RNA sequence: GGGAACGACUCGAGUAGAGUCGAAAAUCAGACGGUAACACUGUUACAUACACCACCACGAUGGCCUCCUUCGAUCAGGUAGACGACGGCGUGUACACGUCUGCUCCACCUUACUCACAGCCACCAGUUGUGACAACCACUGUGACGGAGGACGACGCCACAUGGUUCCGUUCGCGGAACCAUGUGGAAAAGAAACAACAACAACAAC
Reactivity to 2A3 in 0.01 (KOAc 150mM, MgCl2 10mM, bicine 150mM(pH8.5), 24C), signal-to-noise 1, nucleotides 027 to 156: u070c000a000g020a050c030g020g000u020a040a020c090a040c130u050g030u140u110a020c010a070u080a060c040a010c070c000a000c050c010a070c040g150a070u030g040g000c010c000u000c030c010u040u000c000g090a130u050c050a000g050g000u060a040g010a050c040g000a000c040g000g010c050g020u030g020u110a050c110a030c000g000u000c060u120g040c000u020c000c000a070c000c030u040u050a050c000u000c010a010c000a010g000c020c030a060c020c070a100g000u010u030g010u070g060a060c040a000a100c040c040a040c030u050g050u060g050a000c030g050g050a040g010g020a010c020g060a000c060g060
The record gives the reactivity of an RNA of 207 nucleotides to 2A3. Values cover nucleotides 27 to 156. It was measured as part of the RMDB library OK3TST.